[RMDB]
RNA sequence: GGGAACGACUCGAGUAGAGUCGAAAAGGUGCCGUCAUUCGCCGAAUUCUGGCGGACCGGCCGGCUGGAACUACCGACCAGAACCGGUUUGACGUGGCUUGCCGAUUUCCGGGCCGACCCGGCGGCCACUGUUGGAGCUAUUCGUAGCUCCAACAGUAAAAGAAACAACAACAACAAC
Reactivity to 2A3 in 0.01 (KOAc 150mM, MgCl2 10mM, bicine 150mM(pH8.5), 24C), signal-to-noise 1, nucleotides 027 to 126: g000g020u040g130c020c010g010u000c010a070u070u060c050g030c010c000g030a040a080u290u070c120u170g010g030c000g000g030a060c040c020g030g000c020c000g030g080c030u040g000g010a100a050c050u080a100c110c030g120a100c030c000a010g010a060a060c020c000g000g030u020u050u070g030a010c020g020u070g070g040c050u050u170g000c000c000g010a030u040u060u020c020c000g010g030g010c000c000g030a070c040c020c000g070g030c000g000g050c010c030
Reactivity to DMS in 0.01 (KOAc 150mM, MgCl2 10mM, bicine 150mM(pH8.5), 24C), signal-to-noise 3, nucleotides 027 to 126: g010g010u000g020c060c010g010u000c030a090u000u000c060g020c020c040g020a190a250u010u010c110u010g020g010c000g000g020a040c080c080g010g000c050c050g000g010c040u010g010g020a120a070c110u010a110c100c080g000a110c010c010a030g000a080a080c080c000g010g020u010u000u000g010a040c060g010u000g000g010c020u000u000g010c020c000g000a210u010u010u000c030c040g010g020g020c020c020g000a070c180c030c020g000g000c010g000g010c010c030